[RMDB]
RNA sequence: GGGAACGACUCGAGUAGAGUCGAAAAGAUAUGGAUAUGUUAGGCUAUGAAGGGAGGUGUCGGAAACGACACUCCUGGAGCCUUCAUAUCCUAAGUCAAAAUCCAACGUACUUCGGUACGUUGGAAAGACUAUAACAACGUUCGCGUUGUUAUAGUCAAAAGAAACAACAACAACAAC
Reactivity to 2A3 in 0.01 (KOAc 150mM, MgCl2 10mM, bicine 150mM(pH8.5), 24C), signal-to-noise 4, nucleotides 027 to 126: g010a000u020a010u070g000g000a000u010a000u020g130u200u110a090g000g000c040u110a270u300g050a040a010g040g030g000a070g070g130u080g010u060c010g000g000a020a020a000c000g000a000c000a010c000u010c000c000u000g000g000a010g000c000c000u000u000c000a000u000a000u000c000c000u000a010a000g010u000c020a020a010a000a300u000c000c000a000a000c000g000u010a000c000u040u060c130g170g000u000a000c000g000u000u000g000g000a020a010a000
Reactivity to DMS in 0.01 (KOAc 150mM, MgCl2 10mM, bicine 150mM(pH8.5), 24C), signal-to-noise 7, nucleotides 027 to 126: g010a010u000a150u010g000g000a010u000a010u000g000u010u010a020g030g020c000u000a290u010g010a190a260g000g000g000a020g020g020u010g020u000c010g020g000a030a020a070c000g010a010c010a030c000u000c010c000u000g000g000a040g020c010c000u010u000c000a000u000a000u000c000c000u000a010a070g000u000c020a110a100a120a190u000c000c000a000a010c000g000u000a000c000u000u020c260g030g010u000a000c000g010u000u000g000g010a010a030a060
This 177-nucleotide RNA was probed chemically with 2A3 and DMS. The reactions ran in a buffer of 150 mM KOAc, 10 mM MgCl2 and 150 mM bicine (pH 8.5), at 24 C. Values cover nucleotides 27 to 126. The DMS profile rests on 16,976 reads. For 2A3, 45,520 sequencing reads were counted.